An RNA of 207 nucleotides, treated with 2A3 and DMS and read out base by base. For 2A3, 3,472 sequencing reads were counted. For DMS, 8,446 sequencing reads were counted.
[RMDB]
RNA sequence: GGGAACGACUCGAGUAGAGUCGAAAAAGCACGGUUUUUGAGGACGCAUUUUGUCCGUGCGGUAAUGCCCUCCUUUACACUUUCUCGCAUGGUGCUGGAGUGUGGAGAGGAAACAAAAGCUAGUCUCGAUAGGCGGUUAACUUCGGUUAACCGCCAACUAAGGACAAGAGUUCGCUCUUGUCCUUAGAAAAGAAACAACAACAACAAC
Reactivity to 2A3 in 0.01 (KOAc 150mM, MgCl2 10mM, bicine 150mM(pH8.5), 24C), signal-to-noise 4, nucleotides 027 to 156: a010g010c000a000c000g010g010u000u010u010u000u020g060a080g020g030a020c050g020c110a120u010u020u000u000g020u010c000c000g000u000g000c010g020g040u180a060a030u260g030c000c010c010u020c020c000u050u110u030a010c000a000c010u080u160u170c040u060c050g030c030a090u220g230g000u270g100c020u000g020g010a020g010u010g000u020g000g000a030g010a010g000g040a000a040a010c000a000a000a000a000g070c030u090a030g010u000c010u000c030g040a100u110a120g000g000c000g000g000u000u010a000a000c000u020u060c150g000g020u000u010a000a000c010c000g000c010c000a000a000
Reactivity to DMS in 0.01 (KOAc 150mM, MgCl2 10mM, bicine 150mM(pH8.5), 24C), signal-to-noise 3, nucleotides 027 to 156: a110g000c010a030c010g010g030u000u000u000u000u000g000a090g000g010a030c040g020c090a140u000u000u000u010g020u000c010c020g040u000g000c010g010g000u010a070a060u000g000c010c010c000u000c030c020u000u010u010a060c020a020c000u000u000u010c040u000c230g040c060a300u000g040g030u010g020c020u000g010g010a030g010u010g010u000g000g010a030g010a180g010g000a050a030a060c020a030a060a050a070g020c070u000a120g010u000c000u000c100g010a180u000a110g010g020c020g000g010u000u000a000a000c010u000u000c270g040g010u000u000a010a000c000c000g000c010c000a000a020